[RMDB]
This 177-nucleotide RNA was probed chemically with 2A3 and DMS. The DMS profile rests on 2,696 reads. 2A3 adducts were read by reverse transcription with SuperScript II with manganese. Values cover nucleotides 27 to 126. Conditions: 150 mM KOAc, 10 mM MgCl2 and 150 mM bicine (pH 8.5), 24 C.
RNA sequence: GGGAACGACUCGAGUAGAGUCGAAAAUUAGUGGCUCGAGUGCAUGUCGUAUUGCCUGAAGAGCAAAAUAACAAAGGUAAGAAGGGUGUAGCAGCAUCCGCUUCGGUUUUUAUCAAGCAUGCAGCAGAGCGAUAUCAUUGUUCGCAAUGAUAUCGCUAAAAGAAACAACAACAACAAC
Reactivity to 2A3 in 0.01 (KOAc 150mM, MgCl2 10mM, bicine 150mM(pH8.5), 24C), signal-to-noise 1, nucleotides 027 to 126: u150u060a040g070u040g090g000c000u000c060g030a010g080u080g050c010a030u010g070u100c070g000u180a070u020u070g000c000c010u050g060a080a030g010a020g040c040a000a020a120a000u120a010a010c050a030a060a000g140g050u140a000a070g060a090a060g020g010g000u030g020u090a020g040c050a010g000c000a010u000c010c020g000c020u000u040c010g070g030u070u070u010u070u040a080u030c010a000a050g010c000a000u030g020c000a020g010c010a020g020
Reactivity to DMS in 0.01 (KOAc 150mM, MgCl2 10mM, bicine 150mM(pH8.5), 24C), signal-to-noise 3, nucleotides 027 to 126: u000u000a060g010u010g010g000c010u000c040g000a150g020u010g000c040a030u010g030u000c190g010u010a090u010u000g000c010c020u010g010a080a130g010a080g010c080a040a040a090a060u010a070a070c200a050a090a080g010g000u010a040a050g010a050a110g010g000g020u000g010u000a110g030c170a090g000c010a020u000c060c030g000c030u000u000c070g010g000u000u000u030u000u000a040u000c050a070a080g010c020a050u000g000c030a050g020c080a170g010